[RMDB]
RNA sequence: GGGAACGACUCGAGUAGAGUCGAAAAGAUAUGGACCGUGUUGUCAGCUCGAGUAAAUCGAAGAACUUGAUCGGAAACGAUCAAGGGAGAUUUACGAGAGCUUGGAUUUACACGGUCCUAAGUCAAAUCUGGUGUAGCGUUCGCGCUACACCAGAAAGAUAGAGCGUAAGUUCGCUUACGCUCUAUCAAAAGAAACAACAACAACAAC
Reactivity to DMS in 0.01 (KOAc 150mM, MgCl2 10mM, bicine 150mM(pH8.5), 24C), signal-to-noise 1, nucleotides 027 to 156: g010a100u000a300u000g040g010a010c000c000g000u000g020u000u000g020u000c000a090g000c010u020c000g050a300g040u000a000a000a000u000c000g010a240a300g030a120a140c000u000u000g000a030u000c000g000g000a100a170a280c030g000a000u000c010a000a000g000g000g010a120g020a040u000u010u000a000c000g000a300g010a010g020c000u000u000g040g010a040u000u010u000a020c000a000c000g000g020u000c000c010u000a000a020g000u000c080a020a070a120u000c000u000g000g020u000g000u000a010g020c000g020u000u020c300g060c000g030c000u000a000c000a000c000c000a010g010a010a030a120
Reactivity to 2A3 in 0.01 (KOAc 150mM, MgCl2 10mM, bicine 150mM(pH8.5), 24C), signal-to-noise 3, nucleotides 027 to 156: g030a030u080a030u120g000g000a000c000c000g000u000g010u000u030g000u010c000a010g000c000u010c000g020a020g000u000a000a010a000u020c030g130a300a010g020a050a020c000u000u010g000a000u000c000g010g050a060a080a040c020g000a000u000c010a000a000g010g000g000a020g000a000u000u000u000a000c000g010a040g010a000g000c000u000u020g010g000a000u140u100u300a000c000a000c000g000g000u000c000c000u000a000a000g000u000c020a000a000a080u010c000u000g000g000u010g000u010a000g010c010g020u050u060c300g010c000g000c160u000a000c000a000c000c000a000g000a000a000a000
An RNA of 207 nucleotides, treated with DMS and 2A3 and read out base by base. Conditions: 150 mM KOAc, 10 mM MgCl2 and 150 mM bicine (pH 8.5), 24 C. The DMS profile rests on 2,496 reads. For 2A3 the reverse transcriptase was SuperScript II with manganese. The 2A3 profile rests on 5,061 reads. It was measured as part of the RMDB library RNAMAK.